[RMDB]
RNA sequence: GGGAACGACUCGAGUAGAGUCGAAAAGAGACGCAGCUCCGCAAUGUUGAUCACAAUGCCUUCGCGCGGCGCGUCUGGAAGUAGGGUUUGCAACGGGAUCGUUAACACGCUGCCCGCGCGCGGUACAGCGUACCACCAGUUUCGACUGGUGGUACGCAAAAGAAACAACAACAACAAC
Reactivity to DMS in 0.01 (KOAc 150mM, MgCl2 10mM, bicine 150mM(pH8.5), 24C), signal-to-noise 2, nucleotides 027 to 126: g000a040g000a050c030g010c000a090g050c040u000c220c040g000c040a080a030u000g010u000u020g040a090u000c150a110c180a070a150u020g020c060c040u000u000c060g020c010g000c230g000g000c060g010c010g000u000c050u000g000g000a070a030g020u000a060g000g020g000u000u030u020g010c090a070a120c100g000g000g000a070u010c010g020u000u010a060a110c210a040c010g000c030u020g000c140c000c010g010c090g000c010g000c300g030g010u020a070c110a120
Reactivity to 2A3 in 0.01 (KOAc 150mM, MgCl2 10mM, bicine 150mM(pH8.5), 24C), signal-to-noise 2, nucleotides 027 to 126: g100a000g000a000c020g000c030a040g000c000u010c020c020g000c020a080a110u100g010u110u090g110a150u020c040a030c050a190a070u140g070c000c000u080u100c070g000c000g000c040g000g000c000g010c000g050u030c030u000g090g000a050a050g030u150a050g000g070g000u100u110u110g020c030a040a050c010g030g070g020a130u070c050g080u030u030a050a010c030a000c040g030c050u150g000c000c000c000g000c030g000c020g020c010g030g000u060a060c040a020